[RMDB]
RNA sequence: GGGAACGACUCGAGUAGAGUCGAAAAUGCGGAGCCCGAGUUGUAAUUUGGAGAGGACACUUCGGGUGCGGCCACGGCAUAAGUUCCUUGGAACAGGACGUCAUAGAGGGUGAGAAUCCCGUCUUUGGUUGCUAUACGCCUUCGGGCGUAUAGCAACAAAAGAAACAACAACAACAAC
Reactivity to 2A3 in 0.01 (KOAc 150mM, MgCl2 10mM, bicine 150mM(pH8.5), 24C), signal-to-noise 2, nucleotides 027 to 126: u120g000c000g070g000a000g000c010c000c000g010a000g000u010u070g110u040a160a230u060u060u130g050g000a110g020a040g170g000a000c030a020c010u060u040c030g000g000g090u050g000c020g010g000c000c010a020c000g020g000c040a010u030a090a060g110u070u050c020c000u060u130g070g000a000a000c000a040g040g010a000c010g050u090c030a050u090a150g020a070g010g000g010u000g000a050g010a000a030u020c020c000c000g100u010c000u030u020u020g060